This 177-nucleotide RNA was probed chemically with DMS and 2A3. Source: RMDB libraries RFM100 and RFMREP, as collected in RNAgym. Reactivities are rounded to 0.1 and cut off at 0 and 3. 2A3 is a SHAPE reagent: it acylates the 2'-hydroxyl of flexible nucleotides of all four kinds. High DMS reactivity at an A or C suggests that its Watson-Crick edge is free.
RNA sequence: GGGAACGACUCGAGUAGAGUCGAAAAUAGCAUCGAUUGGCAGGAGAAAUAGAACCUUGCCCAGGCCGCCGACGGAUAUGCGUGUUCACCGGCUCUUGCGCAGGGACGCCUUCUCGUGGAAAGGGCGUCACCUUAUCAGUUUCGACUGAUAAGGUGAAAAAGAAACAACAACAACAAC
Reactivity to DMS in 0.01 (KOAc 150mM, MgCl2 10mM, bicine 150mM(pH8.5), 24C), signal-to-noise 9, nucleotides 027 to 126: u020a080g010c060a050u010c060g010a110u010u010g000g010c020a050g000g000a080g010a050a070a090u020a080g010a110a110c040c020u000u010g010c020c030c050a060g010g010c070c120g010c020c030g010a110c080g000g000a050u010a060u010g010c120g010u010g010u010u000c020a160c060c020g000g000c020u010c020u000u010g010c300g000c040a090g000g000g000a050c030g000c020c020u000u000c030u000c050g010u020g010g010a050a100a060g000g000g010c030g010
Reactivity to 2A3 in 0.01 (KOAc 150mM, MgCl2 10mM, bicine 150mM(pH8.5), 24C), signal-to-noise 9, nucleotides 027 to 126: u120a010g030c020a050u060c040g100a110u060u120g040g000c030a030g030g060a060g050a040a120a020u170a050g070a050a030c010c000u010u050g010c010c010c000a010g020g010c040c030g020c010c020g060a070c040g020g020a030u070a050u200g120c120g040u100g030u040u050c030a030c080c000g020g000c010u010c010u070u080g010c070g000c020a020g030g000g010a020c010g020c000c000u080u040c060u020c050g080u100g040g050a080a070a070g030g010g000c000g010